[RMDB]
RNA sequence: GGGAACGACUCGAGUAGAGUCGAAAAGUCGACCCGCAGAUGUACGCGGACACACUCGCCAAGCUCGGCAACGUCGGCAACGUGCUGAGGGAUCUGCACGGGCAGAGCCUCGGUCUACCAGCGGUGCUCAGUCGUAUAGCUUCGGCUAUACGACUGAAAAAGAAACAACAACAACAAC
Reactivity to 2A3 in 0.01 (KOAc 150mM, MgCl2 10mM, bicine 150mM(pH8.5), 24C), signal-to-noise 1, nucleotides 027 to 126: g040u020c040g020a080c030c060c010g000c020a020g020a130u170g060u160a050c110g030c000g090g020a010c000a010c000a010c060u110c000g000c000c000a100a010g080c040u100c140g070g000c050a070a080c060g020u020c060g060g000c010a020a040c060g060u070g000c000u010g010a030g040g020g090a300u000c000u000g060c070a110c080g080g250g010c010a000g000a010g000c000c000u000c000g030g030u050c030u030a100c020c010a040g000c010g040g030u070g010c000
Reactivity to DMS in 0.01 (KOAc 150mM, MgCl2 10mM, bicine 150mM(pH8.5), 24C), signal-to-noise 2, nucleotides 027 to 126: g010u000c030g000a100c050c010c010g040c090a050g030a070u000g010u000a090c140g000c040g010g000a150c100a150c200a070c140u000c070g010c010c040a080a120g000c080u000c040g020g010c010a040a060c040g000u000c020g000g010c040a070a080c100g010u000g020c010u000g030a010g000g000g000a120u020c010u030g020c000a180c300g000g020g020c030a010g030a030g010c010c000u010c040g000g000u020c070u000a070c090c040a080g000c030g030g010u000g000c130